[RMDB]
RNA sequence: GGGAACGACUCGAGUAGAGUCGAAAAGAAACGACGUAACGCCUCUGAACGUCGCAGGAAGAAAUAUAGGAAACCUGAGGAAACAGGAACACGCAACGUAUGCCAUAAAAGAACUAGAGGCCAGAAACAUAGGACGGGAGUUCGCUCCCGUCCUAUGAAAAGAAACAACAACAACAAC
Reactivity to 2A3 in 0.01 (KOAc 150mM, MgCl2 10mM, bicine 150mM(pH8.5), 24C), signal-to-noise 3, nucleotides 027 to 126: g080a010a160a000c000g000a000c000g000u010a080a020c110g040c000c010u000c010u010g070a070a020c000g020u000c010g000c060a030g120g160a070a130g050a050a170a040u300a140u210a060g030g090a030a120a000c040c000u020g000a040g020g160a140a070a000c030a010g000g000a050a020c070a000c080g030c010a010a110c110g110u120a050u140g060c000c000a050u090a060a150a000a050g090a030a010c020u050a150g000a010g000g000c000c000a050g040a010a070a000
Reactivity to DMS in 0.01 (KOAc 150mM, MgCl2 10mM, bicine 150mM(pH8.5), 24C), signal-to-noise 2, nucleotides 027 to 126: g010a070a200a300c040g020a020c030g060u010a070a090c130g000c000c000u010c000u000g020a210a030c000g020u000c010g000c150a060g000g010a210a090g030a100a020a010u010a080u040a040g000g080a140a070a040c030c020u000g000a090g000g010a090a240a100c000a010g010g000a060a060c100a010c120g000c190a090a030c110g010u000a030u000g000c020c080a100u030a060a030a120a090g020a020a130c080u020a090g000a000g010g020c030c180a030g030a110a090a070
The record gives the reactivity of an RNA of 177 nucleotides to 2A3 and DMS. Conditions: 150 mM KOAc, 10 mM MgCl2 and 150 mM bicine (pH 8.5), 24 C.